[RMDB]
RNA sequence: GGGAACGACUCGAGUAGAGUCGAAAAAAUCUUGGUGCUUUUGAUGUGCCUUUGGAUGUCCCCGCCCCAGCCUCGUUGCUGCAAGGGGUGCGUGUGAACACUGCGCAAUCUGCGUUUGUUAACACGUCUUCUGGAUCGAUAGCACAGAUUGAGAGACGAGAACAAUAGAGUUCGCUCUAUUGUUCUCAAAAGAAACAACAACAACAAC
Reactivity to DMS in 0.01 (KOAc 150mM, MgCl2 10mM, bicine 150mM(pH8.5), 24C), signal-to-noise 2, nucleotides 027 to 156: a060a020u010c020u000u000g020g000u010g010c010u000u000u000u000g040a150u000g060u000g010c000c030u010u000u000g030g010a100u000g030u000c030c000c050c000g000c050c060c090c010a100g000c040c040u010c180g020u000u000g020c010u000g020c050a220a200g000g010g060g020u000g000c000g050u000g020u000g000a040a030c030a040c190u000g010c000g020c010a240a100u000c190u000g030c020g030u000u000u000g030u000u000a000a060c040a010c030g010u000c060u010u000c050u010g000g030a120u000c020g030a090u000a110g020c040a090c040a050g000a140u000u000g000a090g010a190g020a130c230
Reactivity to 2A3 in 0.01 (KOAc 150mM, MgCl2 10mM, bicine 150mM(pH8.5), 24C), signal-to-noise 5, nucleotides 027 to 156: a000a000u040c020u070u090g180g000u020g000c010u010u120u070u120g060a080u100g090u160g140c020c000u090u070u090g120g010a100u100g090u120c010c000c000c000g040c010c000c000c010a000g000c000c010u240c230g220u300u220g000c010u010g000c020a060a070g000g000g000g000u010g000c030g000u010g000u000g020a020a020c020a010c070u110g010c000g000c010a080a290u130c150u300g000c000g020u010u060u060g000u010u010a000a000c000a000c010g020u010c050u070u030c040u060g030g000a020u040c020g030a030u050a030g020c020a000c010a050g030a050u060u100g080a090g000a020g010a110c100
Source: RMDB library OK3TST, as collected in RNAgym.
Structure probing data (DMS and 2A3) for a 207-nucleotide construct.
2A3 adducts were read by reverse transcription with SuperScript II with manganese.
For DMS the reverse transcriptase was MarathonRT.
Values cover nucleotides 27 to 156.
Conditions: 150 mM KOAc, 10 mM MgCl2 and 150 mM bicine (pH 8.5), 24 C.